[RMDB]
RNA sequence: GGGAACGACUCGAGUAGAGUCGAAAAUUGCCCGGCAGAGGCUUUGUAUCUGGGCACUAGUCUCAACAGAUGACGACACUUCUGUUCAAUCUCAUAUCCUAUCCAUACUGGAUGUAAAACACGCAUGGUUGGUGUUUUUGUUCGCAAAAACACCAACAAAAGAAACAACAACAACAAC
Reactivity to DMS in 0.01 (KOAc 150mM, MgCl2 10mM, bicine 150mM(pH8.5), 24C), signal-to-noise 1, nucleotides 027 to 126: u010u070g020c010c000c000g000g040c000a030g000a020g000g030c100u050u000u040g060u000a050u030c000u050g020g010g000c020a050c150u010a000g000u000c010u000c110a090a180c110a000g000a040u000g000a020c070g000a050c270a090c090u000u000c020u000g030u110u020c140a080a090u050c020u040c040a110u040a100u000c000c020u000a080u000c000c050a140u000a000c000u000g030g010a000u000g050u010a070a000a020a000c050a010c020g030c110a140u040g040
Reactivity to 2A3 in 0.01 (KOAc 150mM, MgCl2 10mM, bicine 150mM(pH8.5), 24C), signal-to-noise 3, nucleotides 027 to 126: u300u100g050c000c000c000g030g000c040a020g020a010g020g000c020u210u130u160g020u020a030u040c020u000g000g030g050c030a020c080u090a060g020u060c040u020c040a050a150c050a020g040a010u060g090a030c040g030a010c020a010c090u040u030c010u010g040u060u040c020a060a120u020c070u000c030a030u050a020u120c010c010u020a030u000c000c010a010u030a170c020u110g020g000a020u000g060u130a030a030a010a010c120a010c030g120c030a030u060g100